[RMDB]
RNA sequence: GGGAACGACUCGAGUAGAGUCGAAAACGCUGGGUCGCUACCCACCCUAUAACCUUGGGUACGCAACAGCUCCUGAAGCGCGCACGGGAGACAUGCGUAAACCCAAGGUUAUAGGAGGCGACCUGUGCUGAAGCGCGCACGGCAACCGAAAGGUGCGGGAACAAGUAUGGUUCGCCAUACUUGUUCCAAAAGAAACAACAACAACAAC
Reactivity to 2A3 in 0.01 (KOAc 150mM, MgCl2 10mM, bicine 150mM(pH8.5), 24C), signal-to-noise 2, nucleotides 027 to 156: c070g020c100u130g000g010g030u010c010g050c010u100a290c020c010c000a020c030c000c000u020a000u000a000a000c000c000u010u010g020g000g010u080a000c020g050c010a070a300c100a200g200c010u000c000c010u040g060a300a040g000c000g000c000g000c010a000c010g000g000g040a010g140a100c060a030u020g000c020g000u070a100a060a020c000c000c000a000a000g000g000u000u000a000u000a000g010g000a000g000g000c010g000a000c000c000u020g040u030g000c000u050g050a160a060g020c020g000c000g000c000a000c010g010g000c040a020a050c050c020g050a100a030a050g000g070u120g010c040g010
Annotation:
This 207-nucleotide RNA was probed chemically with 2A3. The RNA was probed in 150 mM KOAc, 10 mM MgCl2 and 150 mM bicine (pH 8.5) at 24 C.